The data come from the RNA Mapping Database (RMDB), library OK2TST. Chemical mapping of a 177-nucleotide RNA with DMS and 2A3. The RNA was probed in 150 mM KOAc, 10 mM MgCl2 and 150 mM bicine (pH 8.5) at 24 C.
[RMDB]
RNA sequence: GGGAACGACUCGAGUAGAGUCGAAAAAGAGAAACAGAACUAUUAGAUAGGACAGUGUAUGUAUUUCCCAGCACAUCCAUCAAAGAAAUAAAGUACGUGAUAGGAAAUUUUGUACAACGAAUUAUUAAGUGGGCGCUAUGUUCGCAUGGUGCCCGCUAAAAGAAACAACAACAACAAC
Reactivity to DMS in 0.01 (KOAc 150mM, MgCl2 10mM, bicine 150mM(pH8.5), 24C), signal-to-noise 9, nucleotides 027 to 126: a080g010a140g010a110a100a060c090a090g010a090a130c070u010a070u000u000a120g010a160u000a080g010g010a100c080a080g020u000g010u000a050u010g010u000a070u000u000u000c010c000c010a160g010c060a030c050a260u000c020c020a040u010c050a070a070a100g000a080a070a120u000a060a070a090g000u000a040c220g000u000g010a040u010a100g010g000a050a070a110u000u000u010u010g010u000a030c060a040a060c090g000a060a070u010u010a070u000u000a050
Reactivity to 2A3 in 0.01 (KOAc 150mM, MgCl2 10mM, bicine 150mM(pH8.5), 24C), signal-to-noise 9, nucleotides 027 to 126: a000g100a010g040a020a100a000c050a030g070a080a010c020u040a080u300u140a080g030a100u060a100g020g020a020c070a110g020u000g010u060a080u080g060u010a110u050u030u010c000c000c010a000g000c010a000c000a010u000c030c000a000u020c000a020a140a020g100a050a110a030u180a110a110a020g010u020a020c050g020u040g040a040u070a070g080g060a060a100a090u120u150u080u140g030u040a020c020a060a020c070g050a070a060u120u060a050u130u130a250